[RMDB]
RNA sequence: GGGAACGACUCGAGUAGAGUCGAAAAGAAAGAGCCAUGGCCAGAGGCUAUGUUAUGCCCUACAUACAAGACUGCUGUGCCUAGCACAACAAACAAGGUAGCAAUGCACACGUCCAUUGCAGCAGGCCUAUUCCGGAAUCUUCGGAUUCCGGAAUAGAAAAGAAACAACAACAACAAC
Reactivity to DMS in 0.01 (KOAc 150mM, MgCl2 10mM, bicine 150mM(pH8.5), 24C), signal-to-noise 3, nucleotides 027 to 126: g010a060a090a020g000a130g010c090c030a040u000g000g050c020c040a120g000a070g030g030c010u030a040u010g000u030u000a040u000g000c000c010c000u010a180c170a070u000a030c120a050a050g000a050c060u000g040c100u000g020u000g000c010c040u010a120g010c080a010c050a090a040c080a060a050a170c170a070a030g000g000u010a040g040c030a060a040u000g000c040a040c070a050c160g010u010c070c010a020u010u000g010c030a070g000c040a060g010g000c130
Reactivity to 2A3 in 0.01 (KOAc 150mM, MgCl2 10mM, bicine 150mM(pH8.5), 24C), signal-to-noise 6, nucleotides 027 to 126: g110a000a120a000g120a020g040c040c010a030u050g030g010c020c030a090g060a100g150g000c040u030a070u070g070u060u090a090u130g030c000c000c000u060a080c060a050u180a050c040a070a060g080a070c030u030g020c000u010g070u050g040c010c050u080a060g020c050a020c030a210a060c040a050a180a030c050a130a010g130g010u050a040g050c020a010a060u050g020c080a030c030a020c140g050u060c040c020a030u020u050g010c020a020g010c020a010g020g020c000